This 177-nucleotide RNA was probed chemically with 2A3 and DMS. For 2A3, 3,864 sequencing reads were counted. The DMS profile rests on 2,358 reads. For DMS the reverse transcriptase was MarathonRT. Reactivities are given for positions 27 through 126. The data come from the RNA Mapping Database (RMDB), library OK1LIB. The RNA was probed in 150 mM KOAc, 10 mM MgCl2 and 150 mM bicine (pH 8.5) at 24 C.

[RMDB]
RNA sequence: GGGAACGACUCGAGUAGAGUCGAAAACUCGAAAGAGACCUGCAUAUCUUAGGCAGAUGAUCAAGUCCCGUCUGAAAAGCGAAAGCCCUAAGAUAUGCAGCUGUGACGACUUGCCGCAGAAAAUAAAAGUCGUAGGAGUAUUCGUACUCCUACGACUAAAAGAAACAACAACAACAAC
Reactivity to 2A3 in 0.01 (KOAc 150mM, MgCl2 10mM, bicine 150mM(pH8.5), 24C), signal-to-noise 4, nucleotides 027 to 126: c000u000c020g030a040a060a000g070a010g060a100c020c000u000g000c000a000u000a000u000c000u000u000a000g000g010c010a010g010a030u010g020a020u110c040a020a020g030u020c040c060c000g000u010c000u010g140a190a170a140a010g030c010g060a050a080a020g000c010c000c000u000a000a000g000a000u000a010u000g000c000a000g010c000u020g010u010g020a040c050g010a030c010u040u080g000c000c010g000c030a010g090a050a110a040a020u220a040a150a040
Reactivity to DMS in 0.01 (KOAc 150mM, MgCl2 10mM, bicine 150mM(pH8.5), 24C), signal-to-noise 2, nucleotides 027 to 126: c000u000c030g010a100a090a100g000a030g000a110c290c000u000g000c020a000u000a000u020c020u000u010a030g020g030c010a030g000a030u000g000a270u010c010a050a030g010u000c030c300c130g020u020c010u000g000a170a060a210a040g000c030g000a090a110a120g020c030c000c000u000a000a000g020a000u000a010u000g000c020a000g010c060u000g000u000g000a050c010g000a040c030u020u000g000c300c010g040c050a090g000a050a040a040a060u020a040a050a070